[RMDB]
RNA sequence: GGGAACGACUCGAGUAGAGUCGAAAAGCUCGGAGACGAGCAAGGCUGACAAAACAUUGUCCCAACCUCCACGUGGUGUCGGCUGGAUAAUGCUGCAUUAUGUUGCAUUUAUCAACUGGGAAAGAAAACUGCACCCUAGCUUCGGCUAGGGUGCAGUAAAAGAAACAACAACAACAAC
Reactivity to 2A3 in 0.01 (KOAc 150mM, MgCl2 10mM, bicine 150mM(pH8.5), 24C), signal-to-noise 1, nucleotides 027 to 126: g000c010u000c000g020g000a180g000a000c020g000a010g000c040a000a060g000g000c000u000g000a020c010a000a030a020a100c130a140u020u180g010u030c030c000c000a000a070c030c000u010c000c010a060c060g030u090g090g000u000g010u000c010g020g000c070u070g010g000a000u010a020a000u000g040c000u060g000c010a090u120u140a160u300g030u040u020g000c000a000u090u070u030a000u100c020a020a090c060u060g000g000g000a000a170a000g040a000a090a000